[RMDB]
RNA sequence: GGGAACGACUCGAGUAGAGUCGAAAAUCGGCAGGGGGCCUAUGCUAACACCACUCAUCGCUUCAGUUCGCGUUCGGUCCCACACGGAUUCCAACCGCCAUCUCCACCGCGCCGCAGGAACUGUUAGCGCGGUGGCGCCAUUCGUGGCGCCACCGCGAAAAGAAACAACAACAACAAC
Reactivity to 2A3 in 0.01 (KOAc 150mM, MgCl2 10mM, bicine 150mM(pH8.5), 24C), signal-to-noise 2, nucleotides 027 to 126: u160c000g030g010c020a030g000g000g020g080g010c000c000u070a050u090g000c020u050a050a000c000a010c110c000a090c050u100c000a060u030c030g030c110u160u120c060a000g010u030u050c000g010c000g020u000u030c040g060g020u030c000c050c000a000c000a000c020g080g000a030u210u120c020c000a020a030c000c000g070c000c000a080u030c010u000c010c010a020c050c030g020c000g000c000c000g000c010a060g070g110a110a080c030u020g040u210u130a050g050